[RMDB]
RNA sequence: GGGAACGACUCGAGUAGAGUCGAAAAUCAUCAAGAAGUCGACGGAUGACGUGGGGCCGGUGCUCGACCGGAUCUGCGGUGUGUUCGCCGAGGUCUUGGAGCUGUCCUCGGUCGCCGCCGACGACAACUAUACGCGGCACUUCGGUGCCGCGUAUAGAAAAGAAACAACAACAACAAC
Reactivity to 2A3 in 0.01 (KOAc 150mM, MgCl2 10mM, bicine 150mM(pH8.5), 24C), signal-to-noise 2, nucleotides 027 to 126: u040c020a000u000c030a000a080g050a150a020g080u000c000g020a000c030g010g060a180u050g030a090c100g080u260g000g000g010g000c000c020g050g100u060g000c130u130c130g100a180c040c020g080g030a050u000c000u080g300c000g000g070u030g000u020g000u060u300c090g000c030c000g050a000g000g000u030c000u040u220g000g000a030g020c010u020g040u000c000c000u000c000g000g000u030c030g000c020c000g000c000c000g020a000c000g000a000c000a000a030
Chemical mapping of a 177-nucleotide RNA with 2A3. The RNA was probed in 150 mM KOAc, 10 mM MgCl2 and 150 mM bicine (pH 8.5) at 24 C.